Conditions: 150 mM KOAc, 10 mM MgCl2 and 150 mM bicine (pH 8.5), 24 C. An RNA of 207 nucleotides, treated with DMS and 2A3 and read out base by base. Reactivities are given for positions 27 through 156. The 2A3 profile rests on 1,255 reads. For 2A3 the reverse transcriptase was SuperScript II with manganese. The data come from the RNA Mapping Database (RMDB), library M2RFPK. For DMS, 3,503 sequencing reads were counted.
RNA sequence: GGGAACGACUCGAGUAGAGUCGAAAAAAAUCACCUCGGUAUGAUUAGGGUGAGACCUAGGAACCGUAGGGGUAUUCUCAAAGGAAGCUUUUGCAGUGACGCCGAUGUAAGUGGGAUAUAACAACAGAUCAGUUUCGCAGUUUCGACUGCGAAACAAUACGUGAAUCAGUUUCGACUGAUUCACGUAAAAAGAAACAACAACAACAAC
Reactivity to DMS in 0.01 (KOAc 150mM, MgCl2 10mM, bicine 150mM(pH8.5), 24C), signal-to-noise 2, nucleotides 027 to 156: a040a040a050u020c040a080c020c000u000c040g000g010u000a120u010g010a230u000u000a000g020g030g010u010g000a190g010a100c020c000u000a070g020g010a140a070c020c000g000u000a050g010g010g000g010u000a060u000u000c020u000c020a090a110a200g000g000a090a100g000c050u000u000u000u000g000c060a050g000u020g000a080c120g040c010c000g010a050u000g000u000a020a080g020u010g000g000g020a120u000a040u000a050a060c060a050a070c040a080g000a060u000c100a130g020u000u000u000c000g000c000a040g030u000u010u010c300g030a060c000u000g020c000g000a000a000a000c000a050a100
Reactivity to 2A3 in 0.01 (KOAc 150mM, MgCl2 10mM, bicine 150mM(pH8.5), 24C), signal-to-noise 2, nucleotides 027 to 156: a000a000a030u050c020a060c010c000u040c020g020g040u140a130u150g060a150u120u090a040g040g030g050u040g080a130g040a050c000c000u010a030g040g000a050a050c050c040g030u160a030g000g020g000g010u000a030u050u020c010u000c020a070a040a000g050g020a070a010g030c010u030u070u100u070g030c060a030g010u020g020a030c030g000c040c010g040a050u090g000u100a030a060g040u070g040g030g060a040u070a010u060a150a100c100a010a030c020a020g080a140u080c050a050g000u010u010u010c000g000c000a000g000u010u040u130c170g080a020c000u000g010c000g000a000a000a000c000a000a000